[RMDB]
RNA sequence: GGGAACGACUCGAGUAGAGUCGAAAAGAUAUGGAGCACCAGGGACGAUAAGAGCGAAGGUACUAUAAGCUCGGAAACGAGCUUAUAGUAUGUUGACGCUCUUUUGACGUCCCGGUGCUCCUAAGUCGAUAAACUAGUGGUUCGCCACUAGUUUAUCAAAAGAAACAACAACAACAAC
Reactivity to DMS in 0.01 (KOAc 150mM, MgCl2 10mM, bicine 150mM(pH8.5), 24C), signal-to-noise 5, nucleotides 027 to 126: g000a080u010a300u010g010g010a010g010c000a020c000c000a190g060g000g000a010c010g010a190u010a020a010g000a010g010c000g030a300a110g000g010u000a000c000u010a000u000a000a000g010c000u000c010g000g000a080a120a250c000g010a000g010c010u000u000a000u000a000g010u000a000u000g010u010u010g010a300c050g000c010u000c000u000u000u000u000g000a160c070g010u010c000c000c000g000g000u000g000c000u000c000c000u000a000a050g000u000c110
Reactivity to 2A3 in 0.01 (KOAc 150mM, MgCl2 10mM, bicine 150mM(pH8.5), 24C), signal-to-noise 3, nucleotides 027 to 126: g050a000u150a060u220g010g010a000g020c030a060c140c200a300g080g020g000a000c010g010a020u020a090a010g000a000g010c020g040a060a030g210g010u010a000c000u000a000u010a020a000g010c000u000c010g000g000a090a020a000c010g000a000g000c000u000u000a000u000a010g000u000a000u000g020u050u060g080a030c020g000c000u030c000u000u000u010u000g010a010c000g000u000c000c010c000g000g000u000g000c000u000c000c000u000a000a000g000u010c050
Background:
An RNA of 177 nucleotides, treated with DMS and 2A3 and read out base by base. DMS adducts were read by reverse transcription with MarathonRT. 2A3 adducts were read by reverse transcription with SuperScript II with manganese. For DMS, 8,099 sequencing reads were counted. High 2A3 reactivity points to a flexible backbone, as in loops and unpaired stretches.